Chemical mapping of a 177-nucleotide RNA with DMS and 2A3. For 2A3 the reverse transcriptase was SuperScript II with manganese. Conditions: 150 mM KOAc, 10 mM MgCl2 and 150 mM bicine (pH 8.5), 24 C.
RNA sequence: GGGAACGACUCGAGUAGAGUCGAAAAAAUUGCUGAAAGGGAAACGUUUGAAGUUAGUUUGGUAUUCGUUGGAUCAGCUUCACAAGGAGUGUAUUCUGAUGAUAAGCAAGUCAACAUCAAUCUAUGAAGUUAUCAGAACGUUCGCGUUCUGAUAACUAAAAGAAACAACAACAACAAC
Reactivity to DMS in 0.01 (KOAc 150mM, MgCl2 10mM, bicine 150mM(pH8.5), 24C), signal-to-noise 3, nucleotides 027 to 126: a090a030u030u010g010c040u000g000a050a050a050g000g000g000a080a050a060c090g010u020u000u000g010a040a070g010u000u000a110g000u000u030u010g030g000u000a080u020u020c030g010u000u000g000g020a010u010c170a130g000c000u000u000c030a120c300a060a180g000g000a010g030u010g000u010a060u010u010c030u020g000a050u010g000a060u000a080a110g000c030a020a000g020u010c030a010a030c060a060u000c050a000a020u000c070u020a090u030g000a110
Reactivity to 2A3 in 0.01 (KOAc 150mM, MgCl2 10mM, bicine 150mM(pH8.5), 24C), signal-to-noise 3, nucleotides 027 to 126: a010a000u160u190g000c020u050g040a130a050a050g050g010g040a140a080a030c060g010u010u060u060g030a070a060g000u020u030a040g030u000u020u030g090g090u080a150u040u090c020g020u020u040g020g000a040u020c040a060g030c010u030u050c070a080c060a210a120g020g000a010g040u050g020u070a120u100u020c020u000g030a030u000g010a010u000a110a010g120c010a020a010g040u110c020a020a010c010a040u030c020a020a060u000c020u050a110u180g120a050